The record gives the reactivity of an RNA of 207 nucleotides to 2A3 and DMS. The 2A3 profile rests on 3,027 reads. The DMS profile rests on 2,591 reads. DMS adducts were read by reverse transcription with MarathonRT. Values are in units of 0.01, from 0 to 300, in steps of 10. The RNA was probed in 150 mM KOAc, 10 mM MgCl2 and 150 mM bicine (pH 8.5) at 24 C. It was measured as part of the RMDB library RNAMAK.

[RMDB]
RNA sequence: GGGAACGACUCGAGUAGAGUCGAAAAGGGGUCGAGACGGGAAUCGCAUAGACAUGCUCUGAAGCCUCCACGGAGCAACAGCUAUGAACUACGAUUCUCAGCGUCUCGACGGAGGCACCCAAAGGUCCUAGGUCAUGCUUCGGCAUGACCUAGGACCCAUGAGGGAUAUGUUCGCAUAUCCCUCAUGAAAAGAAACAACAACAACAAC
Reactivity to 2A3 in 0.01 (KOAc 150mM, MgCl2 10mM, bicine 150mM(pH8.5), 24C), signal-to-noise 3, nucleotides 027 to 156: g020g000g040g000u020c000g000a010g010a000c030g000g030g020a010a000u020c020g000c170a000u020a040g070a140c030a090u120g000c000u020c010u020g030a100a020g000c000c010u000c010c000a030c020g000g000a000g030c030a040a060c070a070g210c010u010a020u070g050a150a160c090u150a060c300g000a000u030u000c040u020c070a050g120c090g050u010c010u000c000g000a000c000g000g010a010g000g000c020a030c000c000c020a100a060a020g010g010u010c000c000u020a010g000g010u010c010a010u020g010c030u090u130c260g060g000c000a000u020g010a000c010c000u000a020g000g000a000c000c000
Reactivity to DMS in 0.01 (KOAc 150mM, MgCl2 10mM, bicine 150mM(pH8.5), 24C), signal-to-noise 1, nucleotides 027 to 156: g010g000g000g070u000c010g020a040g010a020c050g000g080g000a000a000u000c000g000c020a060u000a090g010a090c070a300u000g020c010u000c000u020g000a060a140g020c020c020u000c010c030a300c000g010g020a060g000c000a040a070c140a190g050c040u000a090u000g010a110a120c020u000a090c020g000a020u000u000c000u000c050a250g010c090g020u000c000u000c010g010a040c010g000g000a040g000g010c030a060c020c000c010a090a100a100g000g040u000c000c010u000a010g000g000u070c020a000u000g010c000u000u000c300g050g000c000a000u010g020a000c020c000u000a000g010g000a010c000c030